[RMDB]
RNA sequence: GGGAACGACUCGAGUAGAGUCGAAAAGGAUCCUGACUCUCUUUGACUUCCUUUGUCAAGCCCAAAAGGCAGGCCACGAUAUUUCACAAGCUAGACUCCUGUAGAGCAAGUCACUGGACGACAAGGCCGAACAGGUUUAAUUCGUUAAACCUGUUCGAAAAGAAACAACAACAACAAC
Reactivity to DMS in 0.01 (KOAc 150mM, MgCl2 10mM, bicine 150mM(pH8.5), 24C), signal-to-noise 7, nucleotides 027 to 126: g020g010a100u010c020c030u000g010a120c060u000c040u010c040u000u000u010g000a080c060u000u000c040c030u000u000u010g010u000c090a090a130g010c020c010c020a050a060a130a170g000g020c030a070g000g000c040c020a070c120g000a100u010a060u000u000u000c060a070c100a080a100g010c040u000a060g010a100c060u000c050c030u010g010u000a060g000a070g010c070a040a090g000u000c030a060c070u000g000g000a100c070g010a050c090a070a090g000g010c150
Reactivity to 2A3 in 0.01 (KOAc 150mM, MgCl2 10mM, bicine 150mM(pH8.5), 24C), signal-to-noise 6, nucleotides 027 to 126: g040g020a060u050c010c010u030g030a070c000u000c000u010c020u110u030u070g040a050c010u060u050c020c000u060u040u030g060u060c050a040a030g000c000c010c040a050a090a000a010g040g000c040a020g030g000c010c010a050c040g040a050u020a120u160u160u080c090a060c020a080a020g030c010u040a030g040a070c020u010c030c030u080g050u120a050g020a020g090c030a050a010g010u000c010a010c130u070g030g020a020c000g010a010c030a080a070g060g000c030